Notes:
Conditions: 150 mM KOAc, 10 mM MgCl2 and 150 mM bicine (pH 8.5), 24 C. Structure probing data (2A3 and DMS) for a 207-nucleotide construct. It was measured as part of the RMDB library PDB130.

RNA sequence: GGGAACGACUCGAGUAGAGUCGAAAACAGCUAAUUUAGAACUGUGACGAUCACCGGGAAUCCAACUGUUUAAUUAAAACAAAGCAUUGCGAUAAGCUUAAAAGCUUUUGACGCAAUGUGAUUUCUGCCCAGUGCUCUGAAUGUCAAAGUGAAGAGAGAUGAACGAAGAGUUCGCUCUUCGUUCAUCAAAAGAAACAACAACAACAAC
Reactivity to 2A3 in 0.01 (KOAc 150mM, MgCl2 10mM, bicine 150mM(pH8.5), 24C), signal-to-noise 3, nucleotides 027 to 156: c010a000g020c050u100a120a130u170u190u180a070g040a150a080c050u060g030u040g070a010c070g000a020u070c010a010c050c020g000g000g010a060a060u040c100c010a090a080c060u040g060u070u070u070a130a180u080u130a090a100a010a040c020a020a050a000g020c020a000u000u000g000c010g030a050u020a050a000g000c000u080u160a040a120a120a000g000c010u020u070u090u140g090a060c010g000c000a000a000u010g010u000g010a000u000u090u030c030u070g040c010c000c000a040g010u010g020c000u000c010u040g040a070a030u080g020u100c070a050a050a030g060u080g100a120a070g020a000g040a010
Reactivity to DMS in 0.01 (KOAc 150mM, MgCl2 10mM, bicine 150mM(pH8.5), 24C), signal-to-noise 1, nucleotides 027 to 156: c020a020g080c040u010a210a040u010u000u000a090g040a240a080c010u020g030u000g050a150c120g050a080u000c000a010c070c000g000g000g060a040a040u000c060c050a050a100c060u000g010u040u000u000a010a180u000u000a020a060a030a130c090a050a200a300g000c010a000u000u000g000c000g000a130u000a000a030g030c000u010u000a110a090a130a240g010c000u000u000u010u000g000a190c090g020c000a030a000u000g010u000g000a060u000u000u000c070u000g080c030c000c050a140g000u010g030c000u000c010u010g000a150a090u010g040u000c060a100a090a090g000u000g020a180a010g050a160g020a240
Values cover nucleotides 27 to 156. 2A3 adducts were read by reverse transcription with SuperScript II with manganese.